[RMDB]
RNA sequence: GGGAACGACUCGAGUAGAGUCGAAAAUGGAUUAUAUGAUAUUUAUGCAGAUGACUUUAUUACAGAUACUUCUACAACCCCGGUACCAUCUGUACCCUCUACAUCUUUAUCAGGUUAUAUUCCUGCAAACACUUGCCUAUUUCGAUAGGCAAGUGUUAAAAGAAACAACAACAACAAC
Reactivity to 2A3 in 0.01 (KOAc 150mM, MgCl2 10mM, bicine 150mM(pH8.5), 24C), signal-to-noise 5, nucleotides 027 to 126: u110g050g020a040u100u120a070u110a120u190g060a030u020a050u070u150u020a030u080g020c020a020g030a070u020g050a090c090u160u220u200a150u200u100a090c000a010g030a030u040a100c040u050u080c010u050a070c080a070a140c010c010c000c000g030g020u050a050c030c020a030u000c010u000g000u040a040c010c010c000u040c000u020a050c020a070u010c010u020u080u010a060u070c010a020g110g000u100u010a090u000a000u240u060c000c000u010g010c020a020
Reactivity to DMS in 0.01 (KOAc 150mM, MgCl2 10mM, bicine 150mM(pH8.5), 24C), signal-to-noise 2, nucleotides 027 to 126: u010g010g010a020u000u000a060u000a080u000g000a000u010a000u010u000u000a030u000g020c050a040g000a030u010g000a110c110u010u030u010a010u020u030a030c100a000g000a050u020a040c110u030u040c110u000a000c030a050a170c070c000c000c030g000g040u010a120c240c060a010u000c010u000g000u000a060c300c050c020u000c010u010a080c040a020u000c040u020u020u000a040u000c060a040g000g020u000u000a040u020a060u000u000c020c000u010g010c290a020